[RMDB]
RNA sequence: GGGAACGACUCGAGUAGAGUCGAAAAAUGUAUCCACCAUUAUAGUAUCAUACAGAAUAGUUUCACCUAGGCCAAGUGUGUUGGCUCAUGCCUUUAAUCCCAACACUUCGGGAGGCCGAGGCAGGUGGAUCACUUGAGGCCGGGAGUUUGAGACCAGUAAGUCACUAAGAUUCGUCUUAGUGACUUAAAAAGAAACAACAACAACAAC
Reactivity to DMS in 0.01 (KOAc 150mM, MgCl2 10mM, bicine 150mM(pH8.5), 24C), signal-to-noise 2, nucleotides 027 to 156: a090u000g010u000a050u010c020c020a080c050c010a220u010u010a110u000a070g000u000a090u000c040a100u000a130c030a110g010a120a140u010a110g010u020u000u010c030a110c050c020u010a070g060g040c020c010a060a090g020u010g020u030g010u000u010g000g000c040u000c070a070u010g020c010c030u000u010u000a150a300u010c010c020c000a070a100c090a070c130u000u000c090g010g020g010a090g000g020c130c110g030a010g000g030c010a020g010g030u000g000g020a050u010c030a020c030u010u000g010a160g000g020c010c010g010g020g010a080g020u000u000u010g010a120g000a070c020c020a110g000
Reactivity to 2A3 in 0.01 (KOAc 150mM, MgCl2 10mM, bicine 150mM(pH8.5), 24C), signal-to-noise 1, nucleotides 027 to 156: a000u080g040u070a050u030c070c050a060c010c030a030u100u090a040u130a300g090u130a070u040c130a050u100a230c000a010g100a070a050u230a080g010u010u030u050c020a050c090c020u100a110g000g000c010c000a030a000g020u050g000u000g010u060u040g170g000c000u030c050a020u020g000c010c010u000u000u030a020a000u040c000c000c000a050a060c140a050c290u200u230c110g000g000g000a000g010g000c040c080g000a000g000g010c000a010g020g000u030g050g110a000u000c000a000c040u050u050g050a060g120g000c000c030g000g030g010a000g010u100u150u100g030a020g010a020c000c010a000g090